[RMDB]
RNA sequence: GGGAACGACUCGAGUAGAGUCGAAAAACAGCGCGGCGUGGGGCUGCAGGAACUCACCGACGACGAGCUGGCCGCCAUCAGCCCCGAGCUGACCCCGCAAGUCCGCGAGGUGCUGACCAUCGAAGGCUACUCAGUGAGCCUUCGGGCUCACUGAGUAAAAAGAAACAACAACAACAAC
Reactivity to DMS in 0.01 (KOAc 150mM, MgCl2 10mM, bicine 150mM(pH8.5), 24C), signal-to-noise 1, nucleotides 027 to 126: a160c040a060g000c050g020c080g010g000c040g060u000g040g000g000g000c080u010g040c230a100g000g000a080a130c130u020c080a100c020c060g020a040c110g000a020c040g000a100g020c060u010g000g030c080c100g000c050c000a130u010c010a000g020c040c060c000c030g000a170g010c010u000g000a090c040c010c000c220g000c180a120a260g000u000c000c130g030c030g020a170g000g000u000g000c020u030g000a100c090c060a100u010c060g010a080a120g030g020c040

Structure probing data (DMS) for a 177-nucleotide construct. Values cover nucleotides 27 to 126. Source: RMDB library OK2TST, as collected in RNAgym. Conditions: 150 mM KOAc, 10 mM MgCl2 and 150 mM bicine (pH 8.5), 24 C.